Chemical mapping of a 177-nucleotide RNA with 2A3 and DMS.
RNA sequence: GGGAACGACUCGAGUAGAGUCGAAAAGUUGAUACUACCAGAUCCUAGAACCCUAUCGAUAUUGUCUCUGCUGUGUACAUAGCUGUGAGUAGUGCAAUAUUGCUUAUAGGGUUUUAGUGUUUGGAAAACAUAGAGACUGCUUCGGCAGUCUCUAUGUAAAAGAAACAACAACAACAAC
Reactivity to 2A3 in 0.01 (KOAc 150mM, MgCl2 10mM, bicine 150mM(pH8.5), 24C), signal-to-noise 3, nucleotides 027 to 126: g010u030u030g020a060u040a170c020u030a050c040c000a000g000a000u000c000c000u000a000g000a010a000c000c000c000u010a010u020c000g020a000u000a000u000u000g120u040c030u000c000u090g060c000u010g060u020g060u250a070c070a110u250a130g070c080u090g060u060g030a000g020u090a010g020u010g000c010a000a000u000a000u010u000g020c010u080u080a010u010a010g000g000g000u000u000u000u010a000g000u000g010u000u000u000g010g000a100a060a020
Reactivity to DMS in 0.01 (KOAc 150mM, MgCl2 10mM, bicine 150mM(pH8.5), 24C), signal-to-noise 2, nucleotides 027 to 126: g000u010u000g020a130u040a080c060u010a260c010c000a020g000a000u000c170c000u020a020g000a000a000c010c020c020u000a020u000c030g010a010u000a000u000u000g000u010c010u000c000u000g000c010u000g060u020g040u010a020c060a090u010a130g010c260u010g040u000g000a030g010u000a010g010u000g010c010a010a000u000a000u000u000g010c300u010u030a010u000a020g010g000g000u000u000u000u000a010g000u000g020u000u000u010g000g010a120a040a020
Description: The 2A3 profile rests on 1,736 reads. The reactions ran in a buffer of 150 mM KOAc, 10 mM MgCl2 and 150 mM bicine (pH 8.5), at 24 C.